This 207-nucleotide RNA was probed chemically with 2A3 and DMS.
[RMDB]
RNA sequence: GGGAACGACUCGAGUAGAGUCGAAAAUAAACUCCGAAUAGGACAUUUUAAUUAUAUACGAAGUAACUCUUAGAUAUUCUAGAUAUGGAAUUGGAUUGAUAUUAUUACAGCACUAUAUUUUCAUAAUUGUGUGUAAUUGUCAGACGGCAUUCAAACAAUUUUAAUGACUGUUCGCAGUCAUUAAAAUAAAAGAAACAACAACAACAAC
Reactivity to 2A3 in 0.01 (KOAc 150mM, MgCl2 10mM, bicine 150mM(pH8.5), 24C), signal-to-noise 1, nucleotides 027 to 156: u070a000a090a010c010u000c010c000g000a080a060u080a060g000g030a020c000a000u170u180u120u110a140a120u210u040a060u050a060u020a250c000g030a110a030g070u030a050a030c020u010c010u140u070a030g010a090u090a090u090u010c000u020a070g020a160u070a100u090g110g020a060a040u090u080g010g010a030u010u080g030a020u070a050u230u000a000u000u010a000c020a050g050c020a040c000u010a000u020a060u300u100u150u210c030a030u060a300a090u180u020g020u000g000u000g000u000a020a020u010u010g040u000c030a010g000a060c000g120g000c040a030u050u080c060a080a000a110c060a040
Reactivity to DMS in 0.01 (KOAc 150mM, MgCl2 10mM, bicine 150mM(pH8.5), 24C), signal-to-noise 1, nucleotides 027 to 156: u000a100a110a090c030u000c040c020g030a130a150u000a160g070g010a040c010a000u000u010u000u000a070a030u030u000a120u030a160u000a210c070g000a170a280g040u000a040a060c030u020c030u000u000a060g000a090u000a020u000u000c000u010a050g020a170u000a200u000g010g000a080a090u000u000g010g020a140u000u000g000a080u030a040u000u000a020u000u030a050c040a080g030c030a050c000u030a170u000a060u000u000u000u010c030a090u000a000a110u000u010g010u000g010u030g030u000a050a090u000u000g000u000c020a060g020a060c030g020g020c030a150u000u010c040a030a050a150c100a120
The reactions ran in a buffer of 150 mM KOAc, 10 mM MgCl2 and 150 mM bicine (pH 8.5), at 24 C. DMS adducts were read by reverse transcription with MarathonRT.